[RMDB]
RNA sequence: GGGAACGACUCGAGUAGAGUCGAAAAGAUGAGCAGGCGGAUAAUCUUGUGCAGUAUGCAUGCUCGUAACUCCAGCGCACAAGUGGAAGCACAAGAUUUAAAUCCAGCAUAGCGCAGGAGCCGCAGAGCUAUCGAUGCAGUUCGCUGCAUCGAUAGCAAAAGAAACAACAACAACAAC
Reactivity to 2A3 in 0.01 (KOAc 150mM, MgCl2 10mM, bicine 150mM(pH8.5), 24C), signal-to-noise 2, nucleotides 027 to 126: g060a010u110g010a010g010c020a030g000g080c010g020g020a070u050a130a010u060c020u020u020g000u000g000c030a060g020u150a060u120g020c030a020u070g010c020u010c010g000u040a020a040c010u010c050c020a050g020c040g000c030a020c070a120a050g050u040g080g020a080a010g000c000a000c000a010a000g000a000u000u050u100a100a160a050u020c010c000a000g000c060a160u120a070g000c010g000c070a060g000g000a000g060c000c000g050c020a030g010a000
Reactivity to DMS in 0.01 (KOAc 150mM, MgCl2 10mM, bicine 150mM(pH8.5), 24C), signal-to-noise 2, nucleotides 027 to 126: g000a070u000g000a030g020c000a130g000g000c000g010g000a140u000a010a010u010c000u020u000g020u000g030c010a140g030u020a090u060g000c030a030u000g010c020u000c050g000u060a050a200c060u000c020c000a090g000c020g090c010a130c160a130a160g000u010g000g000a030a120g000c040a000c000a000a040g020a090u030u000u000a070a090a070u000c000c000a090g030c130a050u010a110g010c070g000c000a030g000g020a040g030c030c020g010c140a030g030a250
The record gives the reactivity of an RNA of 177 nucleotides to 2A3 and DMS. For DMS, 2,179 sequencing reads were counted. Reactivities are given for positions 27 through 126.